[RMDB]
RNA sequence: GGGAACGACUCGAGUAGAGUCGAAAAAUUCGCCGAGAAGCCUCUGUUCGAAAUCAUCGGGAGUGAUCCAGAUGACGGUCCUGCCAUGAGACCGCAACUAGAGCAUGUCGCAUCGAAUGGACUCGGGUAUACUAGGUGACGUUCGCGUCACCUAGAAUCGUUAAGCGUGAUUCGUCACGCUUAACGAAAAAGAAACAACAACAACAAC
Reactivity to 2A3 in 0.01 (KOAc 150mM, MgCl2 10mM, bicine 150mM(pH8.5), 24C), signal-to-noise 1, nucleotides 027 to 156: a030u130u070c060g010c010c010g010a000g010a060a050g080c010c000u020c000u020g080u040u050c000g010a020a010a070u030c010a000u000c010g040g010g000a020g060u060g090a030u000c010c020a010g030a040u000g030a060c080g000g000u000c000c030u080g120c040c010a080u080g000a010g000a130c000c030g000c030a060a050c020u060a060g000a010g000c010a040u140g050u070c080g000c100a120u080c100g020a010a020u010g020g000a020c000u000c010g020g000g040u070a040u030a200c040u000a000g020g000u000g000a000c000g000u000u060c300g000c000g080u000c000a000c000c000u000a000g000a010a010
The record gives the reactivity of an RNA of 207 nucleotides to 2A3. The 2A3 profile rests on 615 reads. For 2A3 the reverse transcriptase was SuperScript II with manganese.